[RMDB]
RNA sequence: GGGAACGACUCGAGUAGAGUCGAAAACAUCAGGUGGACCUUCCGCGCACUUCCAAGCAGGAGCUUUCCUUCCAAGCGCACUUCCAAUCUACUCGAGAGGAGGAGGAGGAGGAGGAUUCCCACAAAACCAAGUAAUUGACUUCGGUCAAUUACUUGGAAAAGAAACAACAACAACAAC
Reactivity to 2A3 in 0.01 (KOAc 150mM, MgCl2 10mM, bicine 150mM(pH8.5), 24C), signal-to-noise 3, nucleotides 027 to 126: c010a050u130c050a030g040g040u030g010g040a050c020c000u080u000c020c060g020c020g000c030a040c040u110u050c020c010a100a070g060c050a100g080g070a030g000c040u050u070u030c000c000u050u100c030c020a120a030g000c030g010c050a040c040u040u000c020c020a040a100u020c010u070a090c040u090c140g020a020g010a020g060g010a020g000g010a050g020g030a030g000g010a020g020g030a020g020g000a080u020u040c010c000c000a030c030a020a070a000a020
Reactivity to DMS in 0.01 (KOAc 150mM, MgCl2 10mM, bicine 150mM(pH8.5), 24C), signal-to-noise 2, nucleotides 027 to 126: c060a110u000c120a040g000g030u000g000g010a080c070c020u000u000c040c020g020c090g020c010a110c040u000u000c070c020a050a130g010c060a120g010g000a070g000c090u010u010u000c010c000u020u000c020c040a030a120g020c030g030c030a180c060u000u000c000c000a070a200u000c000u000a040c090u000c020g000a030g000a300g000g010a040g000g010a070g000g010a090g010g040a060g000g000a090g020g000a130u000u010c010c010c000a120c240a060a040a040a100
Chemical mapping of a 177-nucleotide RNA with 2A3 and DMS. Values cover nucleotides 27 to 126. For DMS, 1,384 sequencing reads were counted. The RNA was probed in 150 mM KOAc, 10 mM MgCl2 and 150 mM bicine (pH 8.5) at 24 C. The 2A3 profile rests on 3,384 reads.